Background: An RNA of 177 nucleotides, treated with 2A3 and read out base by base. For 2A3, 462 sequencing reads were counted. The reactions ran in a buffer of 150 mM KOAc, 10 mM MgCl2 and 150 mM bicine (pH 8.5), at 24 C. 2A3 adducts were read by reverse transcription with SuperScript II with manganese.
RNA sequence: GGGAACGACUCGAGUAGAGUCGAAAACUGCCUCCUUCAGCAAUCAUGAGGGGAGGAAAUGAUAUCGUCUCCAGAGUGAUAGAUUUUGACUCAAUCUGGGAAAAACCGUCCGACUUGAGAAACUAAAGCCGUACCAGUAGUUCGCUACUGGUACGGCAAAAGAAACAACAACAACAAC
Reactivity to 2A3 in 0.01 (KOAc 150mM, MgCl2 10mM, bicine 150mM(pH8.5), 24C), signal-to-noise 1, nucleotides 027 to 126: c000u050g000c000c000u000c000c000u020u080c000a060g020c160a230a000u300c010a010u060g000a050g000g200g000g000a040g000g030a180a120a000u050g000a040u040a000u030c000g010u000c000u010c000c000a000g000a000g040u000g000a000u240a180g100a090u140u040u000u210g080a080c000u000c040a050a050u010c000u020g000g150g050a030a000a000a060a000c000c000g080u000c000c000g000a050c000u000u010g000a000g000a200a160a000c020u010a080a080a080